[RMDB]
RNA sequence: GGGAACGACUCGAGUAGAGUCGAAAACGCGAUCCGUAGUACAUCAUAUGUCAGAUCGGCCCUGAUGAUCGUACCACUGUGGAUCAGACUAGUACGGCCUAUCGGUACGGCCGAUCGGCCUGGCGCCGUGCAAGGCGGUAUUCGUACCGCCUUGCACAAAAGAAACAACAACAACAAC
Reactivity to 2A3 in 0.01 (KOAc 150mM, MgCl2 10mM, bicine 150mM(pH8.5), 24C), signal-to-noise 3, nucleotides 027 to 126: c060g030c030g020a050u070c010c030g040u070a000g030u010a040c010a060u070c030a030u120a090u300g070u050c030a060g030a120u040c050g020g030c020c010c000u020g030a020u050g000a000u020c070g000u020a020c000c060a090c110u100g060u180g210g020a030u100c020a010g100a070c060u040a040g080u070a060c030g020g000c010c030u030a040u000c000g040g020u070a180c090g120g030c010c000g000a000u010c010g000g010c000c020u040g020g020c040g000c050c060
Reactivity to DMS in 0.01 (KOAc 150mM, MgCl2 10mM, bicine 150mM(pH8.5), 24C), signal-to-noise 3, nucleotides 027 to 126: c090g010c170g010a050u000c010c020g010u010a050g040u000a020c030a040u000c040a140u000a160u000g000u010c050a080g020a070u000c070g020g000c030c040c020u010g000a020u000g010a010u000c130g010u000a030c030c100a050c040u020g020u000g030g000a050u000c020a110g020a110c120u000a060g000u020a070c100g010g000c030c010u010a050u010c030g020g000u010a090c210g020g020c010c010g000a020u010c050g010g010c020c040u010g000g000c080g000c090c060
An RNA of 177 nucleotides, treated with 2A3 and DMS and read out base by base. The DMS profile rests on 3,075 reads. For DMS the reverse transcriptase was MarathonRT. It was measured as part of the RMDB library OK2TRN. For 2A3 the reverse transcriptase was SuperScript II with manganese. The RNA was probed in 150 mM KOAc, 10 mM MgCl2 and 150 mM bicine (pH 8.5) at 24 C.